Structure probing data (2A3) for a 207-nucleotide construct. The reactions ran in a buffer of 150 mM KOAc, 10 mM MgCl2 and 150 mM bicine (pH 8.5), at 24 C.
RNA sequence: GGGAACGACUCGAGUAGAGUCGAAAAUAGCGAUUCGUCGCUAAAAAAUCCUAAGUCAACCAGUCGCUUGUCAGCACGAUAAGGAUCGGAAACGAUCCUUUUGACGUGCUUGGAUUUAGCGACUGUUGAUAUGGAAAAAAAGGGGAUUCGUCCCCAACAUGCCCCAACUGUUCGCAGUUGGGGCAUGAAAAGAAACAACAACAACAAC
Reactivity to 2A3 in 0.01 (KOAc 150mM, MgCl2 10mM, bicine 150mM(pH8.5), 24C), signal-to-noise 2, nucleotides 027 to 156: u060a000g010c000g010a030u030u060c300g070u030c020g050c000u050a020a010a000a000a000a150u040c050c010u080a190a010g070u000c000a000a000c080c090a080g000u010c000g020c000u000u060g000u030c000a000g000c000a000c000g010a020u020a100a030g000g010a000u000c010g060g030a080a080a090c010g000a010u000c000c050u020u020u010u010g000a010c000g000u000g000c000u000u050g080g010a010u300u130u090a000g000c010g000a000c000u000g000u000u000g000a000u010a060u040g010g060a000a020a000a000a120a090a120g080g000g000g010a010u190u050c200g110u060c070c000c000c000a000a000
Reactivities are given for positions 27 through 156.